An RNA of 177 nucleotides, treated with 2A3 and DMS and read out base by base. The RNA was probed in 150 mM KOAc, 10 mM MgCl2 and 150 mM bicine (pH 8.5) at 24 C. It was measured as part of the RMDB library OK2TRN.
[RMDB]
RNA sequence: GGGAACGACUCGAGUAGAGUCGAAAACUGUACCCGACGAGGAGGGGCGGUUCGACAUCUUGAGCAUCAAGACGAAGAACAUGCAACUCGACGACGAGGUGGACCUCAGACAACUCGCCAAGGACGCCCUUCGGAGGUAGUUCGCUACCUCCGAAGGAAAAGAAACAACAACAACAAC
Reactivity to 2A3 in 0.01 (KOAc 150mM, MgCl2 10mM, bicine 150mM(pH8.5), 24C), signal-to-noise 1, nucleotides 027 to 126: c030u060g010u060a060c000c000c000g000a040c000g050a080g050g040a030g040g000g000g010c030g020g030u000u030c010g000a030c010a030u010c000u000u010g010a040g300c090a240u210c030a060a000g010a010c070g060a090a020g020a000a000c030a050u120g000c000a050a080c000u020c010g090a080c080g000a030c010g030a030g010g020u140g020g070a110c030c050u000c020a060g030a120c000a030a080c030u020c040g040c020c090a040a040g060g020a010c020g000c040
Reactivity to DMS in 0.01 (KOAc 150mM, MgCl2 10mM, bicine 150mM(pH8.5), 24C), signal-to-noise 2, nucleotides 027 to 126: c090u010g020u000a170c060c000c040g010a140c050g080a050g000g030a030g030g020g040g050c030g000g000u000u010c020g000a300c290a050u000c000u000u000g030a240g020c300a140u010c010a040a000g000a030c070g000a100a300g000a000a020c040a060u000g000c070a050a070c010u000c000g030a080c050g010a050c070g020a070g000g030u000g000g000a170c030c030u000c050a030g000a110c060a030a140c040u000c090g020c020c030a080a080g010g010a030c150g000c130